[RMDB]
RNA sequence: GGGAACGACUCGAGUAGAGUCGAAAAACGUGGUCCCGGACUACGUGCAUUCGUGGUUGGAGGACUACGAGGCCGUUUCUCGCGACGCCGACGGAUACCUCCACCCACCUGGGAAGAUCGCCGCGCUGAUGGAGGACCGCGCGAAGUCGCGCGGCGAGGAUUUUUGAAGGUUCGCCUUCAAAAAUCCAAAAGAAACAACAACAACAAC
Reactivity to 2A3 in 0.01 (KOAc 150mM, MgCl2 10mM, bicine 150mM(pH8.5), 24C), signal-to-noise 1, nucleotides 027 to 156: a000c020g020u020g020g010u120c190c220c060g010g040a010c010u020a000c000g040u050g120c040a100u050u170c040g020u010g010g000u000u000g030g010a030g000g090a040c060u060a040c050g000a020g020g010c080c030g020u030u100u100c180u030c090g080c060g070a090c100g020c000c000g090a220c000g080g000a020u090a160c000c000u000c010c000a000c000c000c000a000c010c040u130g030g030g080a100a030g000a110u010c000g000c020c000g070c010g000c120u200g020a030u020g000g020a040g000g030a160c150c000g000c040g010c010g140a050a000g010u030c010g000c000g000c040g000g020c000g000a000

An RNA of 207 nucleotides, treated with 2A3 and read out base by base. Source: RMDB library OK3TST, as collected in RNAgym. The RNA was probed in 150 mM KOAc, 10 mM MgCl2 and 150 mM bicine (pH 8.5) at 24 C. Values are in units of 0.01, from 0 to 300, in steps of 10. Values cover nucleotides 27 to 156. 2A3 adducts were read by reverse transcription with SuperScript II with manganese.